[RMDB]
RNA sequence: GGGAACGACUCGAGUAGAGUCGAAAACAGCAGCCUGGCACCCCCAGCUCAGAGAAGCCCUGUUCUUUGCUGGGGCCCGCAGGGAGCCAGGUAUCAGGACAGAUUUCUGAGACACGAAAGGUGCAGGUCUCCAGCUCCCGCUUCGCUGGGCCUGUGACUAAAUCGUAAUAUUCGUAUUACGAUUUAGAAAAGAAACAACAACAACAAC
Reactivity to DMS in 0.01 (KOAc 150mM, MgCl2 10mM, bicine 150mM(pH8.5), 24C), signal-to-noise 2, nucleotides 027 to 156: c050a130g050c050a190g030c000c020u010g020g010c040a200c090c000c000c000c010a080g020c030u050c070a050g000a070g010a130a090g010c030c030c060u000g020u000u000c020u000u010u000g020c040u000g020g000g000g040c070c040c110g020c080a170g000g010g020a150g050c000c020a040g000g010u010a010u000c020a070g020g000a100c060a180g010a180u030u000u000c020u010g000a100g000a100c040a150c060g010a130a080a080g020g020u010g020c000a040g010g010u010c030u000c010c020a060g020c010u000c030c070c120g000c150u010u000c080g000c070u000g010g000g000c040c000u000g000u000g010a190
Reactivity to 2A3 in 0.01 (KOAc 150mM, MgCl2 10mM, bicine 150mM(pH8.5), 24C), signal-to-noise 2, nucleotides 027 to 156: c030a010g130c010a010g030c000c000u010g000g000c020a120c000c040c000c000c000a000g020c010u020c030a030g000a000g000a100a020g020c000c000c020u070g100u100u020c010u030u010u040g000c000u000g000g020g010g010c000c020c020g110c040a110g020g040g000a010g010c000c000a010g020g000u010a080u050c040a010g040g020a020c020a040g150a120u070u130u000c020u050g050a030g010a030c040a010c130g060a110a080a030g130g010u070g030c000a000g030g010u020c100u050c100c010a000g000c020u050c010c070c050g030c100u240u240c100g030c000u010g010g000g000c000c000u020g010u020g010a020

Record summary:
The record gives the reactivity of an RNA of 207 nucleotides to DMS and 2A3. For DMS, 3,334 sequencing reads were counted. The RNA was probed in 150 mM KOAc, 10 mM MgCl2 and 150 mM bicine (pH 8.5) at 24 C. The 2A3 profile rests on 1,516 reads.